The data come from the RNA Mapping Database (RMDB), library OK2TST. The record gives the reactivity of an RNA of 177 nucleotides to DMS and 2A3. Reactivities are rounded to 0.1 and cut off at 0 and 3. For DMS, 2,405 sequencing reads were counted. The RNA was probed in 150 mM KOAc, 10 mM MgCl2 and 150 mM bicine (pH 8.5) at 24 C. For 2A3 the reverse transcriptase was SuperScript II with manganese.
[RMDB]
RNA sequence: GGGAACGACUCGAGUAGAGUCGAAAAGCCGCCUCAUAGCCGAACGCGCCGGUGAUGUCGAGCUUCGGGAAGUACGCGGACUUCGCGAGGCCGAUGCGCGCGUUCGCGGCCAUCAUCGCGCGCUCGAGCACGUGAUUUAUUUCGAUAAAUCACGUGCAAAAGAAACAACAACAACAAC
Reactivity to DMS in 0.01 (KOAc 150mM, MgCl2 10mM, bicine 150mM(pH8.5), 24C), signal-to-noise 2, nucleotides 027 to 126: g010c050c030g000c070c070u010c110a120u000a080g020c140c010g000a030a030c000g000c010g050c040c060g020g010u010g020a090u010g030u000c040g010a150g010c000u000u000c030g000g000g000a010a010g010u000a070c100g000c140g010g010a230c000u000u010c000g010c000g000a010g020g010c000c010g010a040u010g020c100g020c000g040c070g000u010u000c050g010c030g010g020c030c050a080u010c100a020u000c010g020c000g010c140g010c030u000c070g000a280
Reactivity to 2A3 in 0.01 (KOAc 150mM, MgCl2 10mM, bicine 150mM(pH8.5), 24C), signal-to-noise 2, nucleotides 027 to 126: g030c000c020g050c040c010u130c060a220u160a100g070c080c010g020a030a010c020g000c000g020c070c050g040g050u170g100a090u260g040u060c000g000a040g060c000u020u010c000g050g030g050a020a000g020u030a050c060g000c090g180g100a060c000u030u010c080g120c000g230a010g000g000c000c010g010a030u100g060c120g000c000g020c020g050u050u080c060g010c010g000g000c000c020a060u060c010a030u020c020g040c010g000c030g000c080u040c030g030a020